[RMDB]
RNA sequence: GGGAACGACUCGAGUAGAGUCGAAAAGAUAUGGAUCCCUCUACCCACCGCAAUCGACGAACUACAGCAAGACCAGCAUCGGAAACGAUGUUGAGCUGCGUCGAUUGCGAGGAGGGAUCCUAAGUCAGUAUGAUGAAAAGUUCGCUUUUCAUCAUACAAAAGAAACAACAACAACAAC
Reactivity to DMS in 0.01 (KOAc 150mM, MgCl2 10mM, bicine 150mM(pH8.5), 24C), signal-to-noise 6, nucleotides 027 to 126: g010a100u010a170u010g010g010a000u000c010c000c000u000c000u000a150c070c040c030a300c150c000g000c000a000a010u000c010g010a020c000g000a120a070c170u020a300c060a030g030c020a170a100g030a140c300c040a020g000c000a000u000c010g010g010a130a080a200c010g000a010u000g000u000u000g000a150g010c000u000g000c000g020u000c010g010a010u000u000g000c000g000a020g010g000a010g010g000g000a000u000c000c010u000a000a070g010u010c150a180
Reactivity to 2A3 in 0.01 (KOAc 150mM, MgCl2 10mM, bicine 150mM(pH8.5), 24C), signal-to-noise 6, nucleotides 027 to 126: g070a080u280a220u300g000g000a000u010c020c170c000u020c000u090a300c020c030c020a020c000c020g000c010a010a000u010c000g020a010c010g020a140a110c140u290a110c300a020g030c030a140a120g120a270c170c060a010g010c000a000u000c000g040g030a070a060a030c010g000a000u000g000u000u000g020a020g010c010u010g000c010g000u010c000g000a000u000u000g010c000g000a000g000g000a000g000g000g000a000u000c000c000u000a010a000g020u020c030a020
Conditions: 150 mM KOAc, 10 mM MgCl2 and 150 mM bicine (pH 8.5), 24 C. The record gives the reactivity of an RNA of 177 nucleotides to DMS and 2A3. Source: RMDB library TTRINS, as collected in RNAgym. Values cover nucleotides 27 to 126.